[RMDB]
An RNA of 207 nucleotides, treated with DMS and 2A3 and read out base by base.
The RNA was probed in 150 mM KOAc, 10 mM MgCl2 and 150 mM bicine (pH 8.5) at 24 C.
Reactivities are given for positions 27 through 156.
RNA sequence: GGGAACGACUCGAGUAGAGUCGAAAAGGGUGAUGUCCCCUAACCUUUAUCAAUGGGGGCACUCGGUCGUGCUGUGGGUAGAAAUUUUAUUUCGUGCCUACCUUAGACGCUUGUCGUCGGGAGUAUGUGGGACUGAUGAACUUCGGUUCAUCAGUAACUAAGGAAAAUGAUUCGUCAUUUUCCUUAGAAAAGAAACAACAACAACAAC
Reactivity to DMS in 0.01 (KOAc 150mM, MgCl2 10mM, bicine 150mM(pH8.5), 24C), signal-to-noise 4, nucleotides 027 to 156: g010g010g030u000g000a080u000g010u000c000c000c000c020u010a080a090c090c070u000u000u010a120u000c090a120a080u000g010g030g040g000g020c010a020c030u000c030g020g010u000c030g020u020g010c060u000g030u000g010g050g040u000a290g010a020a030a080u000u000u010u010a070u020u020u000c020g000u000g020c010c000u000a050c020c070u000u000a120g010a070c040g010c050u000u000g010u000c010g020u000c000g020g010g010a120g020u010a050u000g020u010g010g010g010a070c000u000g010a010u010g000a010a010c010u000u000c300g040g010u000u000c000a000u000c000a010g020u000a010a280
Reactivity to 2A3 in 0.01 (KOAc 150mM, MgCl2 10mM, bicine 150mM(pH8.5), 24C), signal-to-noise 9, nucleotides 027 to 156: g060g000g010u200g040a130u040g020u040c010c000c010c010u020a050a070c030c010u120u250u170a220u180c100a070a080u100g000g000g000g000g000c010a010c020u020c020g030g000u020c020g020u030g030c070u080g010u050g010g000g010u020a010g120a020a040a030u170u260u170u180a150u050u130u060c050g050u130g000c000c000u020a030c010c000u040u070a040g010a010c000g010c060u150u300g130u300c010g010u010c000g010g030g010a080g060u110a080u180g060u120g010g020g020a000c000u000g000a000u000g000a000a000c010u030u050c220g070g000u000u000c000a000u000c000a000g000u000a010a010
It was measured as part of the RMDB library M2RFPK. For 2A3, 11,719 sequencing reads were counted. For 2A3 the reverse transcriptase was SuperScript II with manganese.